[RMDB]
RNA sequence: GGGAACGACUCGAGUAGAGUCGAAAAGAUAUGGAUCGUAGGGAGAAGUGUAGAUCGGAAACGAUCUACCUUCGAAGAACUACGAGUCCUAAGUCAAAAGUGUUGUCGACUUCGGUCGACAACACAACCAGUAUUGUAUCUUCGGAUACAAUACUGGAAAAGAAACAACAACAACAAC
Reactivity to DMS in 0.01 (KOAc 150mM, MgCl2 10mM, bicine 150mM(pH8.5), 24C), signal-to-noise 3, nucleotides 027 to 126: g000a020u000a080u000g000g000a230u000c000g000u000a000g000g000g000a040g000a000a000g000u010g020u000a000g000a000u000c000g020g000a010a020a040c000g010a010u000c000u000a010c000c000u000u000c010g000a100a110g000a120a200c010u000a000c000g000a010g000u010c000c000u000a010a090g010u010c010a110a090a110a120g010u000g010u000u000g000u000c000g000a020c000u000u010c190g020g000u000c000g000a010c000a000a000c000a000c010a010a070
Reactivity to 2A3 in 0.01 (KOAc 150mM, MgCl2 10mM, bicine 150mM(pH8.5), 24C), signal-to-noise 4, nucleotides 027 to 126: g010a000u030a000u040g000g000a000u010c000g000u010a000g010g020g040a040g000a020a010g030u090g000u270a000g000a010u000c000g000g010a010a010a000c000g000a000u000c000u010a010c000c010u020u010c020g010a080a000g010a000a000c010u000a000c000g000a010g040u030c000c000u010a020a010g010u010c010a030a020a120a200g000u000g010u010u010g010u000c010g010a020c000u050u100c300g070g000u000c000g000a000c010a000a000c000a000c000a000a010

The data come from the RNA Mapping Database (RMDB), library TTRDEL. An RNA of 177 nucleotides, treated with DMS and 2A3 and read out base by base. The 2A3 profile rests on 21,246 reads.